[RMDB]
RNA sequence: GGGAACGACUCGAGUAGAGUCGAAAACGGUGAUCAAGGACGAAGGCUGGAGUAUCGAAAGUGAUUAGAUACCGCAGUAGUUCCAGCAGUAAAAGAUGCCGACAUGCUCAUUGGACACAGUGGGCAGUAUCGAGAUCGGUUUCGACCGAUCUCGAUAAAAAGAAACAACAACAACAAC
Reactivity to DMS in 0.01 (KOAc 150mM, MgCl2 10mM, bicine 150mM(pH8.5), 24C), signal-to-noise 2, nucleotides 027 to 126: c000g000g010u020g000a060u010c070a110a250g010g000a030c030g000a180a230g020g070c040u070g000g000a050g010u010a040u000c050g000a090a060a040g020u030g010a150u000u000a150g000a030u000a010c010c060g000c140a110g000u000a080g010u020u000c010c010a020g000c110a140g020u010a020a070a120a190g000a020u010g000c030c010g000a140c190a070u000g010c000u000c000a020u000u010g000g030a100c300a120c050a020g000u000g000g000g000c000a030g030
Reactivity to 2A3 in 0.01 (KOAc 150mM, MgCl2 10mM, bicine 150mM(pH8.5), 24C), signal-to-noise 1, nucleotides 027 to 126: c000g000g120u090g050a060u000c060a070a160g100g000a030c040g060a060a000g200g000c030u040g000g000a040g000u000a070u000c000g050a020a000a150g230u220g000a160u050u050a160g000a000u000a010c030c000g000c030a110g040u180a010g000u030u030c020c000a050g020c000a030g170u030a000a010a010a000g040a000u060g000c030c000g030a000c130a070u040g010c000u000c000a000u000u000g050g000a050c000a000c000a170g000u000g000g000g000c040a000g000